[RMDB]
RNA sequence: GGGAACGACUCGAGUAGAGUCGAAAAGAUAUGGACCGGCACUACCCACCCUACGGGUCGGAAACGACCCGUAGGAGGUGCACGGUCCUAAGUCAAAGUCAUACGUGAUCUUCGGAUCACGUAUGACGUGACACUUCAACUUCGGUUGAAGUGUCACAAAAGAAACAACAACAACAAC
Reactivity to 2A3 in 0.01 (KOAc 150mM, MgCl2 10mM, bicine 150mM(pH8.5), 24C), signal-to-noise 2, nucleotides 027 to 126: g100a040u180a180u300g000g000a000c010c000g010g100c000a020c010u250a300c020c030c080a060c010c000c000u000a010c000g000g000g000u010c000g010g000a180a100a010c010g000a000c000c000c000g000u010a000g020g000a010g000g000u010g020c070a040c120g020g000u000c000c000u000a060a000g100u070c100a220a120a140g000u000c000a000u000a000c010g000u000g000a000u020c010u030u170c300g080g010a000u010c000a000c000g010u000a000u000g000a010c010
Reactivity to DMS in 0.01 (KOAc 150mM, MgCl2 10mM, bicine 150mM(pH8.5), 24C), signal-to-noise 2, nucleotides 027 to 126: g010a190u010a160u000g010g010a030c020c000g000g000c020a010c000u000a120c080c040c070a300c120c010c000u000a000c010g000g010g030u000c000g010g000a060a120a140c000g030a010c010c000c000g010u000a010g080g010a000g020g000u000g000c020a120c000g030g000u000c000c010u000a000a060g000u000c120a100a160a220g000u000c000a000u000a000c000g040u000g000a010u000c010u000u000c210g010g000a020u000c000a000c000g000u000a000u000g000a000c010